[RMDB]
Structure probing data (2A3) for a 207-nucleotide construct.
Conditions: 150 mM KOAc, 10 mM MgCl2 and 150 mM bicine (pH 8.5), 24 C.
RNA sequence: GGGAACGACUCGAGUAGAGUCGAAAAUUCCAGGUAACCAGCCCGCUUUUGUCGGACCUGUUGUCAGAUUGGGCUGCCCAUCGUGUGUUCAUCUGCUCAGGUGCCUGUUGAGCACUGCACUCAACCACGUGAGGGGCUGCGGGCUUGCACAUGCUGGGGUGUAUGUUCGAUUCGUCGAACAUACACCAAAAGAAACAACAACAACAAC
Reactivity to 2A3 in 0.01 (KOAc 150mM, MgCl2 10mM, bicine 150mM(pH8.5), 24C), signal-to-noise 1, nucleotides 027 to 156: u160u010c000c000a010g060g050u080a080a080c040c000a000g020c000c050c020g060c060u060u050u200u210g000u070c010g010g020a010c010c010u070g080u300u060g070u280c100a030g060a150u150u170g070g030g000c040u080g070c050c050c050a270u140c100g120u130g090u140g000u150u000c000a000u000c070u030g040c030u000c000a050g060g000u060g170c010c000u040g010u070u070g000a000g030c050a080c220u080g000c010a010c010u080c010a010a010c000c030a100c130g040u080g100a130g090g000g050g000c000u010g020c010g020g000g010c000u080u020g080c100a030c010a130u080g020c000u010g000g040
Source: RMDB library OK3TST, as collected in RNAgym. 2A3 adducts were read by reverse transcription with SuperScript II with manganese.